[RMDB]
RNA sequence: GGGAACGACUCGAGUAGAGUCGAAAAGGUUCUAGCAUAAACUAAAGAGGCCUUUCUCAGAGAAGGCUUCUGAACAGUGUUUCUGUGUAAGUCAUGGCUGGUGACACCACUCAGAUUCCACCACAUUCAUCUCUCUGAGCCUGAAGACACAAUUGGAUACGGCUAAUAGGUUCGCCUAUUAGCCGUAAAAAGAAACAACAACAACAAC
Reactivity to DMS in 0.01 (KOAc 150mM, MgCl2 10mM, bicine 150mM(pH8.5), 24C), signal-to-noise 1, nucleotides 027 to 156: g040g010u020u010c010u010a050g050c070a140u000a040a040a140c160u000a110a230a040g020a060g010g000c000c040u000u000u000c000u000c070a230g000a110g000a020a040g040g020c050u000u010c010u010g020a040a060c060a180g020u010g000u020u010u010c000u000g000u010g000u000a040a100g010u000c010a060u000g010g000c040u000g020g010u000g000a110c010a140c020c080a020c000u000c010a070g010a080u000u000c040c020a070c050c030a040c040a070u000u010c090a040u000c030u010c090u000c030u000g010a060g000c140c040u010g010a030a070g010a100c030a060c050a090a180u000u000g020g030a260
Reactivity to 2A3 in 0.01 (KOAc 150mM, MgCl2 10mM, bicine 150mM(pH8.5), 24C), signal-to-noise 2, nucleotides 027 to 156: g070g010u090u120c020u080a030g040c040a110u190a210a120a060c010u050a220a090a010g010a020g000g000c000c000u000u030u000c020u000c030a050g030a010g010a060a020g000g000c000u000u040c020u000g010a050a030c060a060g050u020g010u090u050u000c030u010g030u030g020u050a050a050g030u020c010a040u070g250g000c120u130g140g000u020g000a000c000a020c030c040a010c010u030c010a000g000a090u070u020c050c030a030c020c070a060c030a000u080u160c050a180u050c030u020c010u010c010u050g010a000g010c000c020u050g050a020a020g050a020c020a000c020a160a150u300u110g050g020a030

The record gives the reactivity of an RNA of 207 nucleotides to DMS and 2A3.
Reactivities are rounded to 0.1 and cut off at 0 and 3.
The RNA was probed in 150 mM KOAc, 10 mM MgCl2 and 150 mM bicine (pH 8.5) at 24 C.
2A3 is a SHAPE reagent: it acylates the 2'-hydroxyl of flexible nucleotides of all four kinds.